[RMDB]
Overview
Chemical mapping of a 177-nucleotide RNA with 2A3 and DMS. The 2A3 profile rests on 2,452 reads.

RNA sequence: GGGAACGACUCGAGUAGAGUCGAAAAUAGAAGAAAAAGGAUAGAUUGUAGGCAACAAAAAAUUGCUCUAAGUGGAUUUAGCUGUUUGCAGUUGCUUUAGUCUGCGGUAAGCUUCAGCUUGAUAGGGCGAACCAUUCUGGUUCGCCAGAAUGGUUCGAAAAGAAACAACAACAACAAC
Reactivity to 2A3 in 0.01 (KOAc 150mM, MgCl2 10mM, bicine 150mM(pH8.5), 24C), signal-to-noise 2, nucleotides 027 to 126: u090a000g020a070a020g030a030a140a010a040a070g090g010a080u070a060g020a010u050u080g070u100a020g000g020c000a010a010c020a040a160a000a040a050a100u020u050g000c010u010c040u120a080a150g100u080g210g130a120u050u080u090a040g010c000u010g010u060u040u090g040c030a020g000u050u020g010c010u000u030u000a040g010u030c040u030g010c060g040g060u060a060a010g010c020u000u020c020a050g000c010u020u050g030a090u160a130g040g030g050
Reactivity to DMS in 0.01 (KOAc 150mM, MgCl2 10mM, bicine 150mM(pH8.5), 24C), signal-to-noise 6, nucleotides 027 to 126: u010a110g000a050a070g010a050a070a070a150a110g010g010a120u010a040g000a040u000u010g010u000a020g020g000c010a020a020c030a010a070a100a020a030a050u000u000g010c040u000c110u010a040a080g010u010g000g000a130u010u000u000a020g010c010u010g010u000u000u000g000c230a170g000u000u000g000c020u000u000u000a040g010u000c020u000g010c090g000g010u010a070a090g000c020u000u000c030a070g010c080u000u000g020a130u000a070g010g010g010
It was measured as part of the RMDB library OK2TRN. The reactions ran in a buffer of 150 mM KOAc, 10 mM MgCl2 and 150 mM bicine (pH 8.5), at 24 C. The DMS profile rests on 7,363 reads.